[RMDB]
RNA sequence: GGGAACGACUCGAGUAGAGUCGAAAAUAUAGAUUUUGAUACAAAUCAAGACUUGCCAGCGGAUACAUUUAGUAAUGACGUUACAUUUGAGGAUUGGUGGGCUAAUCAGAUUAACAACAACAGAACAUCAUCCUGUCCCAUUCGUGGGACAGGAUGAAAAAGAAACAACAACAACAAC
Reactivity to 2A3 in 0.01 (KOAc 150mM, MgCl2 10mM, bicine 150mM(pH8.5), 24C), signal-to-noise 1, nucleotides 027 to 126: u200a000u000a130g110a200u030u000u080u070g070a000u190a260c040a040a070a070u000c040a020a020g090a070c040u100u070g020c000c000a000g000c000g080g000a000u060a050c020a030u030u080u060a120g000u080a020a020u110g130a040c000g030u060u060a010c010a020u060u070u060g000a000g090g000a000u000u200g130g000u110g000g060g050c020u030a000a150u010c000a090g030a000u170u300a090a070c050a060a050c000a010a000c000a080g060a000a000c000a060
Reactivity to DMS in 0.01 (KOAc 150mM, MgCl2 10mM, bicine 150mM(pH8.5), 24C), signal-to-noise 1, nucleotides 027 to 126: u100a100u120a060g000a200u040u000u010u000g020a160u010a150c230a070a040a100u010c010a110a000g030a040c130u000u000g050c150c090a000g000c040g000g000a150u050a000c030a110u000u110u000a050g000u010a010a000u000g000a210c100g000u000u000a000c010a000u040u000u000g030a140g000g000a110u010u000g090g020u000g010g000g030c110u010a010a050u010c010a120g000a020u090u060a040a030c020a020a130c220a050a060c030a100g000a300a020c280a020